This 207-nucleotide RNA was probed chemically with 2A3 and DMS. The DMS profile rests on 5,305 reads. Source: RMDB library OK3TST, as collected in RNAgym. Conditions: 150 mM KOAc, 10 mM MgCl2 and 150 mM bicine (pH 8.5), 24 C.
RNA sequence: GGGAACGACUCGAGUAGAGUCGAAAACGUACGUGGAGACACGUACGACGAGACUUCGGUCUCGAAUAGCGCCAUCUGGCCCGGCGCGCGCGCGAGGCGUCGGUGGUCGGCGAGCCCACGGACGCAAAAACUCGCGCGUAAAUAAAUAGGGCUAGUAGUAAAUGUACAUGUUCGCAUGUACAUUUACAAAAGAAACAACAACAACAAC
Reactivity to 2A3 in 0.01 (KOAc 150mM, MgCl2 10mM, bicine 150mM(pH8.5), 24C), signal-to-noise 3, nucleotides 027 to 156: c000g000u000a000c000g000u010g020g020a060g020a030c000a000c000g000u000a000c010g000a010c000g000a000g000a010c010u030u070c210g070g000u000c000u000c000g000a030a080u120a010g000c010g000c000c000a060u030c020u010g000g000c000c000c000g000g010c000g000c010g000c010g010c000g000c000g000a010g010g030c010g020u020c110g100g010u000g000g000u030c040g020g160c150g020a030g000c000c010c000a000c020g080g000a000c000g000c040a030a100a020a020a040c010u000c000g000c000g000c000g000u010a000a000a000u180a000a000a000u010a010g000g000g000c000u000a000g000u000a000
Reactivity to DMS in 0.01 (KOAc 150mM, MgCl2 10mM, bicine 150mM(pH8.5), 24C), signal-to-noise 2, nucleotides 027 to 156: c060g030u000a010c000g070u000g020g010a300g000a270c000a000c010g020u000a020c000g000a120c000g030a040g020a030c000u010u000c300g070g010u000c000u000c020g000a100a060u000a070g030c020g020c010c000a060u000c010u000g010g010c000c000c000g020g020c020g050c000g040c060g020c030g090c010g000a060g040g000c010g000u000c020g000g030u000g020g000u000c020g000g020c070g010a270g000c220c000c000a040c010g020g000a040c000g020c130a100a000a060a190a230c010u000c000g010c020g020c010g000u000a000a030a060u000a020a060a060u000a040g100g010g040c000u000a000g000u000a270